RNA sequence: GGGAACGACUCGAGUAGAGUCGAAAACCUACUUUGGGGCCCAAUGCUGUCGCGAAGAGUUCGGCUCUGUCAGCCCGGCUGGGUCCGGGUGGGGGCCGGCACAGAGGGACACACCGGGCCGGGGCGCACGUGAUACAGGAUUCGUCCUGUAUCACGUAAAAGAAACAACAACAACAAC
Reactivity to 2A3 in 0.01 (KOAc 150mM, MgCl2 10mM, bicine 150mM(pH8.5), 24C), signal-to-noise 8, nucleotides 027 to 126: c010c000u040a070c050u150u150u230g150g020g040g020c010c000c010a040a050u130g070c190u010g030u010c040g010c010g300a050a040g020a030g040u210u300c020g000g000c000u000c010u040g190u120c030a050g040c000c000c000g030g000c060u290g170g040g130u080c000c010g000g000g010u050g010g010g000g000g000c000c000g000g000c010a020c010a020g040a040g010g040g000a000c000a000c000a010c030c090g000g000g000c000c010g000g010g000g020c080g000c010
Reactivity to DMS in 0.01 (KOAc 150mM, MgCl2 10mM, bicine 150mM(pH8.5), 24C), signal-to-noise 3, nucleotides 027 to 126: c010c000u010a040c150u000u030u040g000g030g020g000c010c000c010a100a150u060g000c180u000g060u000c000g010c000g000a300a100g000a090g030u030u030c040g030g010c000u000c000u030g020u020c120a210g000c010c020c000g020g000c010u060g020g000g000u040c010c010g000g000g010u000g010g010g000g000g010c000c000g000g000c020a070c000a030g010a300g010g020g010a040c020a040c020a090c170c240g000g000g010c000c020g020g010g000g000c110g000c160
The record gives the reactivity of an RNA of 177 nucleotides to 2A3 and DMS. Reactivities are given for positions 27 through 126. For DMS the reverse transcriptase was MarathonRT. The reactions ran in a buffer of 150 mM KOAc, 10 mM MgCl2 and 150 mM bicine (pH 8.5), at 24 C. High DMS reactivity at an A or C suggests that its Watson-Crick edge is free.